[RMDB]
RNA sequence: GGGAACGACUCGAGUAGAGUCGAAAAACACUAAAACUGAAAACGGAAGGCAAUCCUUCCACGACGAUACUUACUUUCCUUUGAUCGUCGUUACUACUGGCAUAGCCACAAAGGAGAACAAACAUGAGCGCGGACACUGACUUCGGUCAGUGUCCAACAAUUCGAAACUCUUCGGAGUUUCGAAUUGAAAAGAAACAACAACAACAAC
Reactivity to 2A3 in 0.01 (KOAc 150mM, MgCl2 10mM, bicine 150mM(pH8.5), 24C), signal-to-noise 4, nucleotides 027 to 156: a000c060a000c050u140a060a040a090a030c060u090g160a060a060a050a040c060g000g010a020a000g020g020c090a070a160u280c000c000u000u010c010c010a000c000g000a000c000g000a000u090a180c020u050u010a020c030u050u140u040c030c010u040u040u030g000a000u000c000g000u000c000g000u030u060a060c020u030a040c020u020g020g000c040a300u100a130g000c020c000a010c040a070a040a010g070g020a030g010a060a040c080a120a060a010c050a140u230g070a040g140c170g020c050g050g000a000c000a000c000u000g000a000c000u020u050c080g020g000u020c000a000g000u000g000u000c000c000a010a000
Reactivity to DMS in 0.01 (KOAc 150mM, MgCl2 10mM, bicine 150mM(pH8.5), 24C), signal-to-noise 1, nucleotides 027 to 156: a070c060a120c070u020a030a060a100a300c060u000g000a090a060a100a080c020g060g000a050a000g070g030c190a120a170u000c050c010u000u010c000c010a080c020g000a030c020g000a020u000a060c040u000u000a070c180u010u000u000c030c090u000u040u000g030a080u000c000g000u010c000g000u000u010a030c030u000a080c100u000g010g050c050a240u000a170g000c010c060a190c050a050a080a030g020g030a040g000a070a190c050a060a100a100c050a070u000g010a220g000c050g020c100g020g000a040c000a010c000u000g010a060c000u000u020c270g050g000u000c020a000g030u010g000u000c000c000a010a100

An RNA of 207 nucleotides, treated with 2A3 and DMS and read out base by base. 2A3 adducts were read by reverse transcription with SuperScript II with manganese. Source: RMDB library M2RFPK, as collected in RNAgym. As a SHAPE reagent, 2A3 marks flexible, mostly unpaired nucleotides at the ribose 2'-OH.